The record gives the reactivity of an RNA of 177 nucleotides to 2A3 and DMS. It was measured as part of the RMDB library OK2TRN. Reactivities are rounded to 0.1 and cut off at 0 and 3. The reactions ran in a buffer of 150 mM KOAc, 10 mM MgCl2 and 150 mM bicine (pH 8.5), at 24 C. For DMS, 7,086 sequencing reads were counted. The 2A3 profile rests on 13,720 reads.
[RMDB]
RNA sequence: GGGAACGACUCGAGUAGAGUCGAAAAAACCCUCGGAGUCAAUGGAAACAUGAACACCUUGGCAAAAUGGGGCACCAUCAGGAGCACGGCCACAAUACACAGCAAUUGCGUGGCCCUUACUACGGUGGUCUACCUAAUGAUUCGUCAUUAGGUAGACAAAAGAAACAACAACAACAAC
Reactivity to 2A3 in 0.01 (KOAc 150mM, MgCl2 10mM, bicine 150mM(pH8.5), 24C), signal-to-noise 6, nucleotides 027 to 126: a010a000c020c010c010u010c040g070g030a050g020u000c020a020a050u180g020g040a210a100a040c060a150u130g080a080a020c030a050c030c000u030u030g040g000c020a040a020a030a140u140g010g000g000g010c010a010c010c000a020u090c060a030g080g000a020g030c080a030c160g010g000c010c010a010c010a030a030u110a060c110a010c060a140g130c040a090a240u090u070g000c020g020u010g000g000c000c000c000u010u030a050c010u010a010c010g030g040u050g000
Reactivity to DMS in 0.01 (KOAc 150mM, MgCl2 10mM, bicine 150mM(pH8.5), 24C), signal-to-noise 7, nucleotides 027 to 126: a080a070c040c000c000u000c100g010g010a300g000u000c070a050a030u020g010g020a120a090a140c130a070u000g010a090a090c190a100c040c020u010u000g010g020c050a050a040a140a090u020g000g010g000g000c050a060c030c020a060u010c090a110g010g000a050g020c150a080c300g000g000c010c000a000c010a040a120u000a080c100a090c120a100g010c220a080a080u000u000g000c220g020u000g000g020c000c010c060u000u000a120c040u000a060c100g010g010u000g020